[RMDB]
RNA sequence: GGGAACGACUCGAGUAGAGUCGAAAAGAUAUGGAAAGGAACUACUCGUUGGACCACGAAGAACUCGGAAACGAGGGAGUGGAUCAACGAGCCUUUCCUAAGUCAAACAUCUCCUUCGGGAGAUGAACACCUACAUCAACUUCGGUUGAUGUAGGUGAAAAGAAACAACAACAACAAC
Reactivity to 2A3 in 0.01 (KOAc 150mM, MgCl2 10mM, bicine 150mM(pH8.5), 24C), signal-to-noise 2, nucleotides 027 to 126: g010a010u060a040u190g000g000a040a010a020g020g000a050a020c070u160a060c000u300c030g010u000u020g000g030a030c020c000a000c000g170a300a100g000a080a020c000u000c020g020g040a100a050a020c000g010a040g000g000g030a010g000u030g040g020a090u030c000a000a000c000g000a000g000c010c000u040u010u000c000c000u000a080a000g040u020c050a060a060a020c000a000u010c000u000c040c000u040u130c300g130g020g000a020g000a000u000g000a000a000
Reactivity to DMS in 0.01 (KOAc 150mM, MgCl2 10mM, bicine 150mM(pH8.5), 24C), signal-to-noise 2, nucleotides 027 to 126: g010a040u000a300u010g000g000a020a010a000g000g000a070a010c050u000a300c020u000c010g010u000u000g000g020a060c000c000a010c020g020a070a110g000a050a180c000u010c000g000g010a080a080a220c010g000a000g010g000g000a070g030u000g000g010a070u000c010a000a000c010g070a010g000c000c000u000u010u000c000c000u030a030a090g010u000c020a070a180a260c010a020u000c000u000c000c000u000u010c180g030g000g020a010g010a010u000g000a080a220